The record gives the reactivity of an RNA of 207 nucleotides to 2A3. Conditions: 150 mM KOAc, 10 mM MgCl2 and 150 mM bicine (pH 8.5), 24 C. For 2A3, 708 sequencing reads were counted.
[RMDB]
RNA sequence: GGGAACGACUCGAGUAGAGUCGAAAAUCUUGUAGCACUAGCCCUAAAAACUGCAAGAUAAGAUUGAGGUGGGCCAGCACAGAGAAUAGAAAGCGAGGAGGAAGAUCUGCAGCGAAGUGAGGAGGCAGAGUGUUGUGCACCCUUCCAUCACACGGGCGGGUAGUUACCAUUUCGAUGGUAACUACCCAAAAGAAACAACAACAACAAC
Reactivity to 2A3 in 0.01 (KOAc 150mM, MgCl2 10mM, bicine 150mM(pH8.5), 24C), signal-to-noise 1, nucleotides 027 to 156: u000c010u000u000g010u020a010g000c040a020c150u050a060g040c020c000c000u150a140a200a070a040a050c010u050g000c000a010a000g000a030u110a030a070g030a060u130u160g030a000g070g020u060g020g010g000c000c040a050g040c020a040c020a020g070a000g030a130a050u110a120g120a100a070a010g100c130g030a040g040g000a040g000g000a000a030g000a020u000c060u070g000c000a070g030c020g150a090a040g040u050g050a020g030g040a020g000g000c020a000g020a000g070u020g020u020u050g020u080g000c020a140c000c000c010u010u000c010c040a100u090c020a020c000a020c110g120g000g000c080